[RMDB]
RNA sequence: GGGAACGACUCGAGUAGAGUCGAAAAUUACGUGUAACUUGGUAUCGUCCACAGCCUGCAAAGCCUCACUAAACUUUCUGAAACAUUGAAAGAAGUGAAAAAUCACGGCGUUGAGCUAUAACGUUUAUAGUGUCAAUAUGUUCGCAUAUUGACACUAAAAAGAAACAACAACAACAAC
Reactivity to 2A3 in 0.01 (KOAc 150mM, MgCl2 10mM, bicine 150mM(pH8.5), 24C), signal-to-noise 6, nucleotides 027 to 126: u090u070a020c040g020u040g040u090a080a070c030u030u060g050g010u070a060u140c040g020u020c020c000a030c020a030g000c000c000u030g010c030a050a060a050g020c000c010u020c000a000c000u040a050a130a020c010u000u000u000c000u000g030a020a010a030c050a080u140u090g000a000a000a000g020a010a000g000u010g050a080a030a000a000a030u130c090a030c020g030g000c000g010u000u080g040a020g000c010u060a030u060a290a050c020g020u030u050u050a130
Reactivity to DMS in 0.01 (KOAc 150mM, MgCl2 10mM, bicine 150mM(pH8.5), 24C), signal-to-noise 7, nucleotides 027 to 126: u020u010a060c060g000u010g010u010a030a060c040u000u010g010g020u010a070u010c080g020u000c020c040a100c080a120g000c030c010u000g000c070a080a090a110g010c090c070u010c000a010c020u010a100a110a050c000u000u000u000c000u000g010a150a170a090c200a130u010u010g000a010a010a030g010a050a020g010u000g010a010a050a050a090a080u010c110a070c100g010g000c040g020u000u010g000a070g000c080u010a050u030a060a050c090g000u000u000u000a090